[RMDB]
RNA sequence: GGGAACGACUCGAGUAGAGUCGAAAAAGCGGACUUCCGCUGGGACGAAGCCGACCCCACGCGGAUGUACCGGGGCAACUUCGACCUGCUGCAACUGACCAAGCCUGACGUGAUUCGCGCCGUGCACCGACCAUACUACCUUCGGGUAGUAUGGUCGAAAAGAAACAACAACAACAAC
Reactivity to 2A3 in 0.01 (KOAc 150mM, MgCl2 10mM, bicine 150mM(pH8.5), 24C), signal-to-noise 4, nucleotides 027 to 126: a010g050c030g010g020a040c010u050u000c000c000g000c020u010g010g000g000a020c080g100a190a070g050c070c040g060a140c030c010c000c000a050c120g020c010g000g030a010u030g020u060a210c000c010g010g000g040g000c010a070a040c040u050u040c010g030a030c010c030u010g010c010u040g030c010a080a050c070u080g030a040c000c010a040a020g060c020c010u050g050a060c050g040u050g020a090u050u040c010g020c010g000c020c000g010u020g020c000a020c040
Reactivity to DMS in 0.01 (KOAc 150mM, MgCl2 10mM, bicine 150mM(pH8.5), 24C), signal-to-noise 2, nucleotides 027 to 126: a030g060c050g010g020a110c020u010u000c020c030g020c000u000g010g000g020a040c040g000a150a140g030c160c110g010a200c230c000c020c040a070c190g010c020g000g000a020u040g040u000a080c050c010g000g000g000g030c110a070a030c100u010u010c050g070a070c060c010u000g000c030u000g010c170a090a150c080u000g000a070c020c070a100a120g030c010c030u070g000a080c150g000u000g000a140u000u020c050g000c010g000c060c000g000u000g010c130a130c020